[RMDB]
RNA sequence: GGGAACGACUCGAGUAGAGUCGAAAAUAAAAAGGGACGUGCAGCAGGCGAGGAACCCAAGCAGCUGUCCCGGGUGCCAUCGCCCUACGUGAGGACACCAGGCGUGGAUAGCACGAGGCCUAAAAAACUCACCAGUAUGAUUCGUCAUACUGGUGAGAAAAGAAACAACAACAACAAC
Reactivity to DMS in 0.01 (KOAc 150mM, MgCl2 10mM, bicine 150mM(pH8.5), 24C), signal-to-noise 3, nucleotides 027 to 126: u000a030a060a040a070a130g000g010g000a100c020g010u000g010c020a100g000c120a090g010g010c020g000a090g000g030a070a040c000c020c030a060a130g020c020a120g030c090u000g000u000c000c030c030g000g000g020u010g000c020c020a070u000c010g000c000c030c030u020a040c110g010u000g000a190g000g000a090c070a030c050c040a080g010g020c030g020u010g010g000a060u010a110g020c000a010c040g010a090g000g010c010c010u010a000a050a050a030a050a090